[RMDB]
RNA sequence: GGGAACGACUCGAGUAGAGUCGAAAAGAGCUAACAGGGCUUCUGGCACUAGGAGAUGUUCGCAGUGCGUAUAGUUGGUUGUUAUUGGUUAUCACAACCAAAAACUCCCGCCAAAUCCUCUUUGAGCGUACGAUCAAUAAUUCGUUAUUGAUCGUACAAAAGAAACAACAACAACAAC
Reactivity to 2A3 in 0.01 (KOAc 150mM, MgCl2 10mM, bicine 150mM(pH8.5), 24C), signal-to-noise 4, nucleotides 027 to 126: g030a000g020c020u050a090a100c040a110g070g100g000c050u050u010c030u100g040g010c030a020c090u120a070g020g020a030g040a130u150g100u120u060c040g030c090a090g120u050g140c030g000u050a080u060a170g160u040u030g010g010u000u010g040u030u030a050u060u100g300g050u170u070a050u090c030a010c010a030a000c000c000a000a020a000a020a020c010u000c020c010c020g000c010c020a070a110a070u060c020c000u040c030u110u100u160g120a060g050c060
Reactivity to DMS in 0.01 (KOAc 150mM, MgCl2 10mM, bicine 150mM(pH8.5), 24C), signal-to-noise 7, nucleotides 027 to 126: g010a110g020c030u000a080a100c180a080g010g010g010c050u000u000c070u000g000g020c030a090c080u000a090g010g000a060g010a120u010g020u000u000c050g010c050a110g000u010g020c050g010u000a070u000a090g020u010u010g010g010u000u000g000u000u000a120u000u000g010g010u010u010a100u010c140a070c090a010a010c010c000a000a020a050a100a120c050u000c030c020c110g010c040c050a020a090a090u010c100c030u000c080u010u000u000g010a080g010c170